[RMDB]
RNA sequence: GGGAACGACUCGAGUAGAGUCGAAAAAUGUUGAGCCAUGCCAACUCCUGUUUGGUGGCCACUUGGUCGCAGACACGUGAAAAGAGGCAAAGCAAUUCAGUUUGCAUGGUUGGCGAUCGAAACGUACAAACGUCCGGUAAUUCGUUACCGGACGUUUAAAAGAAACAACAACAACAAC
Reactivity to DMS in 0.01 (KOAc 150mM, MgCl2 10mM, bicine 150mM(pH8.5), 24C), signal-to-noise 2, nucleotides 027 to 126: a090u020g020u000u000g020a180g040c000c010a070u000g010c010c000a060a060c020u000c070c020u010g000u010u000u000g030g010u000g000g010c000c010a140c270u040u010g050g020u000c010g010c040a040g000a040c080a080c150g010u000g000a080a100a100a110g000a160g000g000c060a080a130a120g000c070a010a030u000u000c300a080g010u000u000u010g020c000a060u000g030g020u010u000g020g020c050g020a060u010c100g010a050a070a060c150g040u000a130c210
Chemical mapping of a 177-nucleotide RNA with DMS. The RNA was probed in 150 mM KOAc, 10 mM MgCl2 and 150 mM bicine (pH 8.5) at 24 C. The DMS profile rests on 1,158 reads. DMS adducts were read by reverse transcription with MarathonRT.